[RMDB]
This 177-nucleotide RNA was probed chemically with 2A3 and DMS.
The data come from the RNA Mapping Database (RMDB), library OK2TST.
The RNA was probed in 150 mM KOAc, 10 mM MgCl2 and 150 mM bicine (pH 8.5) at 24 C.
2A3 adducts were read by reverse transcription with SuperScript II with manganese.
For DMS the reverse transcriptase was MarathonRT.
RNA sequence: GGGAACGACUCGAGUAGAGUCGAAAAUGAUUACGAGCAGGAUCUUAUUACUCGGGAGCAGCAAAGAAUUGCAAACUUGCCAAAUGAAGAAGAACGAGUAAAACCUUGUGCUGCUCUAGAUAGAAGAAGCAUACCUACGAUUCGUCGUAGGUAUGCUAAAAGAAACAACAACAACAAC
Reactivity to 2A3 in 0.01 (KOAc 150mM, MgCl2 10mM, bicine 150mM(pH8.5), 24C), signal-to-noise 2, nucleotides 027 to 126: u080g020a040u140u100a020c030g000a020g030c040a050g030g050a020u000c010u030u070a130u080u060a060c010u000c000g020g000g000a020g030c060a000g000c010a020a000a070g030a110a200u240u070g030c020a090a110a140c010u030u010g010c000c040a090a100a250u230g070a070a110g030a100a000g050a060a000c010g000a000g020u020a000a060a020a020c000c000u090u110g150u060g100c000u000g020c000u020c000u000a030g030a050u110a040g090a040a010g000a030
Reactivity to DMS in 0.01 (KOAc 150mM, MgCl2 10mM, bicine 150mM(pH8.5), 24C), signal-to-noise 2, nucleotides 027 to 126: u000g000a080u010u020a140c110g000a040g040c030a060g010g010a060u020c040u000u000a150u010u000a040c040u000c030g000g010g010a040g020c070a040g030c010a000a010a070g000a120a150u010u000g040c200a070a100a130c030u000u000g010c040c050a040a100a110u000g000a190a090g060a100a040g000a100a190c020g010a100g010u020a070a020a120a160c190c020u000u000g020u000g000c000u000g000c020u000c000u000a040g040a170u000a030g000a080a090g000a130